[RMDB]
Notes:
An RNA of 177 nucleotides, treated with DMS and 2A3 and read out base by base. Conditions: 150 mM KOAc, 10 mM MgCl2 and 150 mM bicine (pH 8.5), 24 C. The 2A3 profile rests on 4,522 reads. The DMS profile rests on 1,683 reads.
RNA sequence: GGGAACGACUCGAGUAGAGUCGAAAAGAUAUGGAUCAGAACUACGAAUAUUCAUACCGAAGAACUCGGAAACGAGGGAGGUAUGUAUUCGCUGAUCCUAAGUCAAACUAACGGUUCGCCGUUAGAAGAAUACCAACCUGUUCGCAGGUUGGUAUUCAAAAGAAACAACAACAACAAC
Reactivity to DMS in 0.01 (KOAc 150mM, MgCl2 10mM, bicine 150mM(pH8.5), 24C), signal-to-noise 2, nucleotides 027 to 126: g000a030u000a300u010g000g010a000u000c010a040g000a120a040c120u020a300c020g010a020a000u000a010u010u010c010a010u000a000c000c000g000a110a170g000a110a150c010u010c000g000g000a100a090a210c010g000a030g000g000g000a080g030g000u010a020u000g020u020a000u000u000c000g010c000u000g000a030u000c000c000u010a020a120g000u010c030a090a080a180c000u000a010a010c000g000g000u010u010c290g020c020c000g000u000u000a000g020a180a090
Reactivity to 2A3 in 0.01 (KOAc 150mM, MgCl2 10mM, bicine 150mM(pH8.5), 24C), signal-to-noise 3, nucleotides 027 to 126: g000a010u070a020u140g000g000a000u000c010a010g060a160a070c140u200a050c300g000a010a010u050a050u110u220c010a010u000a020c000c030g210a300a060g030a070a020c000u010c010g020g040a100a030a020c020g010a020g000g000g000a000g000g040u010a010u030g020u000a010u000u020c000g000c000u000g000a000u020c010c000u010a080a000g020u010c040a070a060a090c000u000a010a000c020g000g100u040u070c300g030c110c000g000u000u000a020g000a020a030